[RMDB]
RNA sequence: GGGAACGACUCGAGUAGAGUCGAAAACGAUGCACGAGAGUGCAUCGAGCUGACGUGAGUCAGCAAAGGUAGGAAGACGAUGGCAGGCGAAUGAAGCCCCUACCGACAGCGUCACACAUGAGCGUGAGCUCUAGUGACGCAGUCAAUGCCACGUCAAUCAUUACCUUUUAUUCGUAAAAGGUAAUGAAAAAGAAACAACAACAACAAC
Reactivity to DMS in 0.01 (KOAc 150mM, MgCl2 10mM, bicine 150mM(pH8.5), 24C), signal-to-noise 5, nucleotides 027 to 156: c020g020a020u000g000c010a020c000g010a290g010a300g040u000g040c000a010u010c000g010a080g020c000u000g000a010c000g010u010g000a300g000u000c010a030g020c010a020a010a060g060g010u000a040g020g010a150a080g010a060c010g010a120u000g020g020c000a060g010g000c020g000a130a150u010g020a130a210g020c020c000c000c020u000a040c020c030g000a030c010a080g020c000g010u000c000a020c010a120c100a170u000g020a010g030c010g030u000g000a300g000c000u000c000u000a060g010u000g000a000c000g010c000a010g020u000c010a050a070u000g010c010c000a040c010g010u000c020a100a240
Reactivity to 2A3 in 0.01 (KOAc 150mM, MgCl2 10mM, bicine 150mM(pH8.5), 24C), signal-to-noise 8, nucleotides 027 to 156: c000g000a000u000g030c000a000c010g090a080g010a010g090u000g000c000a000u000c000g000a030g000c000u000g000a000c000g130u130g100a050g010u010c000a000g000c020a050a060a010g010g000u000a000g010g020a090a110g020a020c030g070a140u080g000g000c020a020g000g000c010g040a110a170u180g040a110a030g000c000c000c010c000u000a000c000c000g000a000c010a010g000c000g000u000c000a000c000a010c020a060u140g000a000g000c030g030u140g080a030g010c000u000c000u010a020g000u000g000a000c000g000c000a000g000u000c010a010a020u010g000c000c000a010c000g000u000c010a010a060